This 177-nucleotide RNA was probed chemically with 2A3 and DMS. For 2A3 the reverse transcriptase was SuperScript II with manganese. For DMS the reverse transcriptase was MarathonRT. The reactions ran in a buffer of 150 mM KOAc, 10 mM MgCl2 and 150 mM bicine (pH 8.5), at 24 C. Reactivities are rounded to 0.1 and cut off at 0 and 3.
RNA sequence: GGGAACGACUCGAGUAGAGUCGAAAAGAUAUGGACGAUGUAUACAGCGAAGAACGUCUUCGGAAACGAAGACGGGAGCUGUACACUCGUCCUAAGUCAAAGUUCUUAUACUUCGGUAUAAGAACAACUACGUCAUUAGCUUCGGCUAAUGACGUAGAAAAGAAACAACAACAACAAC
Reactivity to 2A3 in 0.01 (KOAc 150mM, MgCl2 10mM, bicine 150mM(pH8.5), 24C), signal-to-noise 1, nucleotides 027 to 126: g000a020u050a040u110g000g000a020c000g010a010u300g050u030a090u020a060c080a010g050c000g260a300a050g000a090a000c000g010u020c020u000u000c020g020g000a040a030a020c010g000a000a000g010a010c000g000g000g000a020g000c000u010g010u010a020c010a010c000u000c000g010u000c000c000u010a070a000g000u000c040a250a100a060g010u020u000c010u000u000a000u000a020c000u050u080c300g180g000u010a000u020a020a030g010a010a010c000a020a000
Reactivity to DMS in 0.01 (KOAc 150mM, MgCl2 10mM, bicine 150mM(pH8.5), 24C), signal-to-noise 1, nucleotides 027 to 126: g040a030u000a300u010g030g000a010c000g020a010u020g050u000a190u000a020c010a040g010c030g000a110a250g010a080a220c010g000u030c000u000u020c000g000g030a040a030a300c000g050a010a010g010a000c000g000g000g000a040g030c000u000g000u000a030c080a010c010u000c000g000u000c000c000u000a000a050g020u000c060a100a090a250g010u000u000c010u000u000a000u000a010c010u000u020c150g030g030u000a000u000a020a010g030a000a000c000a050a180